RNA sequence: GGGAACGACUCGAGUAGAGUCGAAAAACGGAUUCGUCCGUCACCGACCGUAGGGACACGGGAGGGCGCAUUCGAAGAACACCAAUUCGAAAGAGUUGGUGGGAGAAUGCGAACUACCCUCAGUGUCCCUAAACGGCUGCUCGCCCUUCGGGGCGAAGCAUUAUGGCUUAUUCGUAAGCCAUAAUGCAAAAGAAACAACAACAACAAC
Reactivity to DMS in 0.01 (KOAc 150mM, MgCl2 10mM, bicine 150mM(pH8.5), 24C), signal-to-noise 2, nucleotides 027 to 156: a050c020g010g010a060u010u020c290g020u000c010c010g030u000c040a160c080c000g030a050c030c000g080u000a000g030g010g010a030c010a050c020g000g050g020a010g040g030g000c030g000c000a030u000u000c000g010a110a180g030a200a250c000a020c000c000a000a030u000u000c000g000a270a130a230g010a040g030u010u000g000g010u000g000g000g000a250g020a050a020u000g000c000g030a080a090c050u010a230c000c000c000u000c010a060g000u000g000u010c000c000c000u000a000a010a060c040g000g010c010u000g010c040u000c000g020c000c000c010u000u010c280g050g000g000g000c000g020a030a120
Reactivity to 2A3 in 0.01 (KOAc 150mM, MgCl2 10mM, bicine 150mM(pH8.5), 24C), signal-to-noise 6, nucleotides 027 to 156: a000c020g000g010a040u080u100c260g070u030c090c000g020u030c060a080c070c020g070a100c000c000g010u030a020g000g000g010a000c000a000c010g290g200g000a010g000g010g010c000g000c000a000u010u000c030g100a240a030g020a040a010c000a000c000c000a000a000u000u000c010g040a130a070a090g000a030g000u000u000g000g000u000g000g010g010a020g000a000a010u010g000c020g010a020a010c050u190a080c000c000c000u000c010a000g000u000g000u030c020c000c000u000a010a010a000c000g000g000c020u120g040c020u010c020g000c000c010c000u030u090c260g010g000g000g000c000g000a010a010
Chemical mapping of a 207-nucleotide RNA with DMS and 2A3. For 2A3 the reverse transcriptase was SuperScript II with manganese. Conditions: 150 mM KOAc, 10 mM MgCl2 and 150 mM bicine (pH 8.5), 24 C. For DMS, 5,937 sequencing reads were counted. DMS adducts were read by reverse transcription with MarathonRT. The 2A3 profile rests on 10,485 reads.